[RMDB]
RNA sequence: GGGAACGACUCGAGUAGAGUCGAAAAGUGAACCAGAUUAUUUUUUUCGUCAUUGUGUCAUCAUCAAUGUUAAGGGUCUUUUUCUUUGUCGGGAAAAAGACCGUUGAUCACGGCCUGUGAAUGGCAAGUGGUGUCUGUUAUUCGUAACAGACACCACAAAAGAAACAACAACAACAAC
Reactivity to DMS in 0.01 (KOAc 150mM, MgCl2 10mM, bicine 150mM(pH8.5), 24C), signal-to-noise 2, nucleotides 027 to 126: g020u000g010a130a210c010c010a170g050a120u030u020a010u000u000u000u000u020u010u030c100g010u000c020a040u030u000g050u000g020u010c100a090u010c230a010u010c070a050a040u040g000u010u040a040a100g020g040g000u010c000u000u000u010u000u000c000u010u000u030g000u070c190g000g000g030a000a010a000a030a000g000a000c050c000g010u000u000g000a050u010c090a160c140g000g000c020c020u070g000u020g050a070a070u000g000g000c130a070a060
Reactivity to 2A3 in 0.01 (KOAc 150mM, MgCl2 10mM, bicine 150mM(pH8.5), 24C), signal-to-noise 4, nucleotides 027 to 126: g110u060g040a040a040c020c020a050g040a070u080u070a120u130u140u010u030u000u090u110c050g020u020c040a040u020u050g080u030g030u060c020a070u030c000a010u000c010a060a050u050g070u070u200a130a080g120g000g000u030c000u010u020u000u010u000c040u030u040u130g260u090c160g010g000g000a000a000a000a000a000g000a000c010c000g000u000u010g000a010u060c030a030c100g050g020c010c000u060g000u010g140a130a050u040g060g010c020a060a020